[RMDB]
RNA sequence: GGGAACGACUCGAGUAGAGUCGAAAAGGACUUAGGUUCGCCUAAGUCCAAAUAACGUCUACAAGUACGGUAGACGAAGAUAACGUACAGUACAGAAGUACUAAAGGAGAGACUUCGGUCUCUCCAAUCUUACAGAACUGUUCGCAGUUCUGUAAGAAAAAGAAACAACAACAACAAC
Reactivity to DMS in 0.01 (KOAc 150mM, MgCl2 10mM, bicine 150mM(pH8.5), 24C), signal-to-noise 4, nucleotides 027 to 126: g000g000a000c000u000u010a000g000g000u000u010c230g010c000c000u000a000a000g010u000c000c010a020a040a040u000a080a150c050g000u010c000u000a010c000a070a130g010u000a070c120g000g010u000a000g010a020c000g020a070a050g000a150u010a060a140c140g020u000a080c080a030g000u000a040c070a150g000a090a130g010u000a010c030u000a080a090a120g000g010a020g000a010g000a010c000u000u010c160g020g020u000c010u000c000u000c000c000a030a020
Reactivity to 2A3 in 0.01 (KOAc 150mM, MgCl2 10mM, bicine 150mM(pH8.5), 24C), signal-to-noise 4, nucleotides 027 to 126: g000g000a010c000u000u000a010g000g010u030u030c150g080c030c000u000a000a000g000u000c000c000a000a000a000u000a010a010c020g010u000c000u000a000c010a070a100g160u040a060c090g050g000u010a010g000a010c050g010a030a020g060a030u180a110a050c080g040u060a040c090a060g030u020a010c030a060g200a290a030g160u020a010c060u080a060a070a060g000g010a010g000a000g000a000c020u020u050c220g070g000u000c000u000c000u000c000c000a000a000
About this RNA:
An RNA of 177 nucleotides, treated with DMS and 2A3 and read out base by base. Conditions: 150 mM KOAc, 10 mM MgCl2 and 150 mM bicine (pH 8.5), 24 C. It was measured as part of the RMDB library M2PK50.